[RMDB]
Annotation:
Structure probing data (2A3 and DMS) for a 177-nucleotide construct.

RNA sequence: GGGAACGACUCGAGUAGAGUCGAAAAUGCUUGCCGGACCAUGUGGGUCGGGUCAUAGGCUGAAUGCACCGACAAAGGUGGUAUCAAUAUAGCUUAGCUGUGUUGGUCCGGUUCAUGAACCCGGCAAGGCUCGUUACACCUUCGGGUGUAGCGAGCCAAAAGAAACAACAACAACAAC
Reactivity to 2A3 in 0.01 (KOAc 150mM, MgCl2 10mM, bicine 150mM(pH8.5), 24C), signal-to-noise 4, nucleotides 027 to 126: u080g030c000u020u000g000c000c000g000g000a040c040c000a140u220g000u010g090g040g000u020c000g000g020g000u000c000a020u040a000g030g000c020u030g060a030a010u060g000c000a000c000c000g240a090c270a110a160a060g020g020u050g060g030u180a030u170c040a100a010u060a070u030a130g070c060u120u020a000g000c020u060g020u070g140u170u020g000g010u010c000c000g000g000u000u010c010a010u010g020a000a030c010c000c000g000g000c010a010a020
Reactivity to DMS in 0.01 (KOAc 150mM, MgCl2 10mM, bicine 150mM(pH8.5), 24C), signal-to-noise 2, nucleotides 027 to 126: u010g040c170u060u000g000c000c000g010g000a050c010c140a050u000g050u000g000g020g040u000c030g000g000g020u010c000a050u010a160g000g050c030u040g020a050a040u010g000c000a040c010c000g000a150c300a180a080a130g020g000u000g000g010u050a000u090c110a180a050u050a090u050a090g000c060u020u000a120g010c080u000g020u080g030u030u000g000g000u010c020c020g000g010u000u000c030a000u000g000a130a180c060c010c010g000g000c040a000a090
The RNA was probed in 150 mM KOAc, 10 mM MgCl2 and 150 mM bicine (pH 8.5) at 24 C.